The data come from the RNA Mapping Database (RMDB), library OK3TST.
Chemical mapping of a 207-nucleotide RNA with 2A3 and DMS.
The DMS profile rests on 9,070 reads.
[RMDB]
RNA sequence: GGGAACGACUCGAGUAGAGUCGAAAAGCUGCGUCGCUCAGGACACGUCACUGGCUGAUCCAUCCGCUGAGUGAGGGAUGGUCAGAGGUCCAUCCGCUAGAUCCUUAAGCUGUGACUUGUAUUGCCGGGAGUGAGGGAUGGCUCCGUACCAAGUAGAUCUAACGAUAACAUUCGUGUUAUCGUUAGAAAAAGAAACAACAACAACAAC
Reactivity to 2A3 in 0.01 (KOAc 150mM, MgCl2 10mM, bicine 150mM(pH8.5), 24C), signal-to-noise 7, nucleotides 027 to 156: g060c040u080g010c030g080u060c040g020c040u030c040a020g010g030a020c010a010c080g040u030c010a010c070u060g050g000c010u020g030a050u070c030c010a020u010c000c030g080c170u120g110a080g120u160g110a110g040g050g010a010u010g010g000u010c010a020g010a040g060g000u000c020c020a060u040c020c000g020c090u030a040g020a130u090c010c000u080u140a080a020g010c020u020g050u040g060a050c000u060u080g090u110a160u090u230g060c040c020g040g070g000a030g030u100g040a030g020g050g010a050u050g020g000c020u010c020c020g020u040a070c030c020a060a020g080u100a020g080a080
Reactivity to DMS in 0.01 (KOAc 150mM, MgCl2 10mM, bicine 150mM(pH8.5), 24C), signal-to-noise 3, nucleotides 027 to 156: g020c040u000g010c040g040u010c050g010c020u000c040a130g020g010a090c070a060c060g020u000c010a050c020u000g060g010c010u000g010a090u000c010c000a060u000c010c020g000c080u000g010a130g030u000g010a140g040g020g020a010u000g020g020u000c030a110g010a140g000g020u010c030c030a050u000c050c020g040c090u000a130g010a060u000c010c020u000u000a110a090g030c020u010g000u010g010a090c060u000u000g020u000a150u000u010g020c030c020g010g000g020a080g030u020g010a080g000g020g010a100u010g020g020c000u000c020c030g020u020a120c050c030a040a120g010u000a100g000a180